The record gives the reactivity of an RNA of 177 nucleotides to 2A3 and DMS. The data come from the RNA Mapping Database (RMDB), library OK1LIB. For 2A3, 1,045 sequencing reads were counted. The RNA was probed in 150 mM KOAc, 10 mM MgCl2 and 150 mM bicine (pH 8.5) at 24 C.
RNA sequence: GGGAACGACUCGAGUAGAGUCGAAAAGAUCAUACGCUGCUGGUCCAGGGCGUCUCCAAAAGCUUCAGUCGGCCUGACGGGUCGGAAGUGCGUGCUCUGGACCAUGUGGAUCUCGUUGUACGGGACGCACCUAUCGUCAGUUCGCUGACGAUAGGUGAAAAGAAACAACAACAACAAC
Reactivity to 2A3 in 0.01 (KOAc 150mM, MgCl2 10mM, bicine 150mM(pH8.5), 24C), signal-to-noise 2, nucleotides 027 to 126: g050a040u080c010a060u150a300c120g010c070u140g000c000u000g060g000u010c000c000a000g010g000g000c010g110u040c070u000c000c030a090a070a160a040g050c000u040u030c060a300g090u090c050g000g010c000c000u060g170a070c150g040g010g000u040c000g000g000a030a000g020u030g130c070g080u150g000c010u000c000u010g000g050a000c000c000a000u000g000u010g000g050a090u020c030u000c090g070u000u090g000u030a020c120g000g000g120a000c010g030
Reactivity to DMS in 0.01 (KOAc 150mM, MgCl2 10mM, bicine 150mM(pH8.5), 24C), signal-to-noise 2, nucleotides 027 to 126: g040a010u010c020a070u040a300c080g000c150u030g020c100u020g000g000u000c000c010a050g000g000g000c000g050u020c110u020c110c210a050a070a090a130g000c010u000u000c010a210g020u060c020g010g000c010c020u000g010a180c210g020g020g000u010c000g000g000a020a000g010u000g000c160g030u000g000c000u000c000u010g030g000a000c000c000a000u010g030u010g040g000a040u020c020u000c090g030u000u000g000u020a040c030g000g010g010a080c100g000